[RMDB]
RNA sequence: GGGAACGACUCGAGUAGAGUCGAAAAGAUAUGGAGUCCGAAGAACGACCAGACAAUGAUGUCGGAAACGAUUGAGUCUGUCGGGAGGACUCCUAAGUCAAAAGGAAUGAACUUCGGUUCAUUCCAAGAAGCAUAAUGGCUUCGGCCAUUAUGCUUCAAAAGAAACAACAACAACAAC
Reactivity to 2A3 in 0.01 (KOAc 150mM, MgCl2 10mM, bicine 150mM(pH8.5), 24C), signal-to-noise 1, nucleotides 027 to 126: g030a020u060a020u170g000g000a050g030u000c010c000g140a240a030g020a060a000c040g000a020c130c200a030g000a020c030a010a270u250g150a000u110g090u050c010g000g000a100a030a010c030g000a020u000u050g030a000g000u040c000u030g000u000c010g000g000g000a040g000g020a000c000u030c000c010u000a000a000g010u030c020a000a060a060a060g010g010a020a000u010g040a010a010c050u020u150c300g120g000u010u000c000a010u010u000c000c000a010a000
Reactivity to DMS in 0.01 (KOAc 150mM, MgCl2 10mM, bicine 150mM(pH8.5), 24C), signal-to-noise 2, nucleotides 027 to 126: g000a010u010a300u030g010g010a020g010u000c020c000g070a090a170g040a180a180c010g000a000c160c100a000g000a000c000a120a170u000g000a120u000g000u000c010g000g030a130a040a120c000g020a010u000u010g010a130g000u020c000u000g020u000c000g010g000g030a060g000g000a000c000u000c000c010u000a000a090g000u000c050a090a060a170a170g010g000a050a010u000g000a030a000c000u000u010c250g010g000u000u000c000a020u000u000c000c000a010a030

This 177-nucleotide RNA was probed chemically with 2A3 and DMS. DMS adducts were read by reverse transcription with MarathonRT. For 2A3, 1,704 sequencing reads were counted. The data come from the RNA Mapping Database (RMDB), library TTRDEL. For 2A3 the reverse transcriptase was SuperScript II with manganese. Reactivities are given for positions 27 through 126. The reactions ran in a buffer of 150 mM KOAc, 10 mM MgCl2 and 150 mM bicine (pH 8.5), at 24 C.